[RMDB]
RNA sequence: GGGAACGACUCGAGUAGAGUCGAAAAGCUAUUAUUACGUCAGUUAUUGAGGUCAUAGCUACGCCGAAGCUUGACGCUAUUGCAUGGAUAGCCGCUACUGAUGCGUUGUCUACUCCUGGCGCUGCCAGUACUUCGCAGUUUUCGAACUGCGAAGUACAAAAGAAACAACAACAACAAC
Reactivity to DMS in 0.01 (KOAc 150mM, MgCl2 10mM, bicine 150mM(pH8.5), 24C), signal-to-noise 4, nucleotides 027 to 126: g010c040u000a030u010u020a120u010u000a050c030g000u000c020a030g010u000u000a130u010u010g020a070g010g030u000c300a040u000a030g010c010u000a060c060g020c030c040g020a130a050g010c080u000u000g010a110c110g010c020u000a040u000u000g020c200a090u000g020g020a050u000a020g020c030c060g010c060u000a120c080u000g010a140u010g000c040g030u010u000g000u000c010u000a040c030u000c020c030u000g000g020c020g020c050u010g000c010c000a150
Reactivity to 2A3 in 0.01 (KOAc 150mM, MgCl2 10mM, bicine 150mM(pH8.5), 24C), signal-to-noise 4, nucleotides 027 to 126: g000c020u030a030u190u010a080u150u170a190c070g090u020c030a060g050u140u190a170u240u180g020a030g000g060u040c050a050u050a070g000c010u030a020c030g000c020c020g030a030a010g020c090u070u080g030a030c050g030c010u010a030u040u060g060c090a140u140g090g010a010u010a020g010c040c020g000c030u050a040c040u090g060a090u110g000c020g010u010u080g060u050c010u040a030c020u000c000c030u010g020g030c040g020c030u020g080c000c010a050
Source information: This 177-nucleotide RNA was probed chemically with DMS and 2A3. 2A3 adducts were read by reverse transcription with SuperScript II with manganese. For 2A3, 3,721 sequencing reads were counted. The reactions ran in a buffer of 150 mM KOAc, 10 mM MgCl2 and 150 mM bicine (pH 8.5), at 24 C.